This 177-nucleotide RNA was probed chemically with DMS and 2A3. Values cover nucleotides 27 to 126. 2A3 adducts were read by reverse transcription with SuperScript II with manganese. For 2A3, 2,654 sequencing reads were counted. The reactions ran in a buffer of 150 mM KOAc, 10 mM MgCl2 and 150 mM bicine (pH 8.5), at 24 C.
RNA sequence: GGGAACGACUCGAGUAGAGUCGAAAAUCAUGCUGGCGCUGGUCGCCCAGCUCGAUCCCGGCCAGCGCGACACCCUGUCGAUCGACCUGGGCGCCGACCCGCUGACGGCGUCGCUGCGCGAUCGUCCGGUGUCGCAUCCAUUCGUGGAUGCGACACCAAAAGAAACAACAACAACAAC
Reactivity to DMS in 0.01 (KOAc 150mM, MgCl2 10mM, bicine 150mM(pH8.5), 24C), signal-to-noise 2, nucleotides 027 to 126: u020c180a120u010g000c060u000g000g000c010g000c020u000g000g040u010c080g010c120c020c020a080g010c080u000c070g030a040u000c050c060c030g030g010c010c030a020g020c000g060c020g000a020c020a090c040c000c000u010g010u000c010g010a030u000c010g000a160c030c050u000g010g010g000c010g010c010c000g000a140c080c050c090g000c060u000g010a150c000g000g000c000g000u000c000g020c020u000g000c110g040c010g030a000u000c000g020u010c000c290
Reactivity to 2A3 in 0.01 (KOAc 150mM, MgCl2 10mM, bicine 150mM(pH8.5), 24C), signal-to-noise 2, nucleotides 027 to 126: u050c030a020u150g050c060u090g030g030c030g000c080u060g050g030u040c020g050c030c020c000a020g060c020u020c040g020a070u010c000c010c000g060g010c010c000a010g030c000g000c050g040a010c020a030c020c020c010u030g000u000c010g000a010u030c000g130a300c010c000u030g000g000g030c010g000c000c000g040a120c040c010c060g020c110u070g010a030c000g000g050c000g040u000c050g020c120u050g030c020g000c000g020a000u000c000g010u010c040c100